[RMDB]
RNA sequence: GGGAACGACUCGAGUAGAGUCGAAAAGUUAUGUUAUUUGCGUUUUUAGCUCUUACCCUCUGUGUAAUUGUUGGAUUGUCAGACCCAAUAAUUACCCAUGAGCUUGCUAAUCCGAUAGGUAGCGGCCCAGAUAGUGGCGGGCUUAACUGGUAGCUACAGACAUCGCUAUUUUCGAAUAGCGAUGUCUAAAAGAAACAACAACAACAAC
Reactivity to 2A3 in 0.01 (KOAc 150mM, MgCl2 10mM, bicine 150mM(pH8.5), 24C), signal-to-noise 1, nucleotides 027 to 156: g000u100u070a060u160g060u100u030a100u060u080u120g050c020g050u020u020u000u020u300a050g000c040u000c110u060u100a090c000c010c000u040c010u000g050u000g000u000a010a010u000u000g000u000u000g040g000a130u040u090g130u220c090a100g090a120c010c000c000a000a000u000a020a000u000u020a020c040c000c000a050u120g000a000g050c020u110u180g010c010u030a120a000u050c050c010g030a130u020a120g130g000u010a030g140c060g020g070c000c000c000a050g120a230u050a030g070u060g040g100c080g020g050g000c030u000u110a050a000c000u010g030g060u050a000g000c000u050a050c020
Chemical mapping of a 207-nucleotide RNA with 2A3.
The RNA was probed in 150 mM KOAc, 10 mM MgCl2 and 150 mM bicine (pH 8.5) at 24 C.
The 2A3 profile rests on 452 reads.
Values are in units of 0.01, from 0 to 300, in steps of 10.